Overview: Structure probing data (DMS and 2A3) for a 177-nucleotide construct. Source: RMDB library RFMREP, as collected in RNAgym. For DMS the reverse transcriptase was MarathonRT. For 2A3 the reverse transcriptase was SuperScript II with manganese.
[RMDB]
RNA sequence: GGGAACGACUCGAGUAGAGUCGAAAAAGAAGGUAGGUUCGCCUACCUUCUGUUGGGUAACCACUAAAAUCCCGAAAGGGUGGGCUGUGGUGACCUUCCAGGCUGAGCAUCCCUUCGGGGAUGCUCAACAUACAUUAUACUUCGGUAUAAUGUAUGUAAAAGAAACAACAACAACAAC
Reactivity to DMS in 0.01 (KOAc 150mM, MgCl2 10mM, bicine 150mM(pH8.5), 24C), signal-to-noise 9, nucleotides 027 to 126: a000g010a010a000g000g010u000a000g010g010u000u010c250g020c000c000u000a000c000c000u000u000c000u000g000u000u000g000g010g000u010a130a050c000c000a010c010u000a020a010a020a050u010c000c000c000g010a100a100a150g010g010g010u000g000g010g040c300u000g000u000g000g010u000g000a040c010c000u000u010c010c000a170g010g010c200u000g000a010g010c010a000u000c000c000c000u000u010c200g020g010g010g000a000u000g000c000u000c000a010
Reactivity to 2A3 in 0.01 (KOAc 150mM, MgCl2 10mM, bicine 150mM(pH8.5), 24C), signal-to-noise 1, nucleotides 027 to 126: a000g010a000a000g010g000u010a000g010g030u040u070c200g090c030c010u000a000c040c010u000u000c000u000g000u010u060g000g000g010u020a010a010c000c000a000c000u010a000a010a010a030u080c000c000c010g020a070a020a010g000g010g010u020g000g030g000c040u020g010u000g010g030u010g010a030c000c000u050u000c010c000a070g090g040c070u070g000a000g020c010a010u010c010c010c020u050u100c270g020g000g000g010a000u000g010c000u000c000a000